[RMDB]
RNA sequence: GGGAACGACUCGAGUAGAGUCGAAAAGGUAGCCACUUCGGUGGCUACCAAAGAGAUAGUACCUAUUGAGUUCCUCUGUAGGUACUCAUGACAGGAUGUCAAAAACAUGAUUCUUCGGAAUCAUGAAUCCCUACACGAAGUUCGCUUCGUGUAGGGAAAAAGAAACAACAACAACAAC
Reactivity to 2A3 in 0.01 (KOAc 150mM, MgCl2 10mM, bicine 150mM(pH8.5), 24C), signal-to-noise 1, nucleotides 027 to 126: g000g000u000a020g010c000c010a030c020u040u110c240g110g000u000g010g100c000u010a000c000c000a010a000a000g050a000g000a030u100a070g000u000a000c000c000u010a000u000u030g010a060g060u110u040c070c040u050c070u020g020u010a010g010g020u040a000c010u000c010a070u070g000a010c050a030g070g260a260u140g020u080c060a040a000a040a040a040c000a000u010g010a000u010u000c000u030u020c190g100g000a000a000u000c000a000u000g020a010a040
Reactivity to DMS in 0.01 (KOAc 150mM, MgCl2 10mM, bicine 150mM(pH8.5), 24C), signal-to-noise 1, nucleotides 027 to 126: g010g050u000a010g030c010c000a000c000u010u000c170g000g010u000g000g000c000u010a010c000c000a010a040a060g000a210g050a110u000a050g010u000a010c010c000u000a010u000u020g010a070g000u000u010c070c010u000c070u040g000u000a000g000g010u000a000c000u000c140a050u030g010a060c050a130g000g020a120u000g010u010c030a060a090a100a120a180c000a000u000g000a010u000u000c000u000u010c200g020g010a010a010u000c000a000u000g000a050a040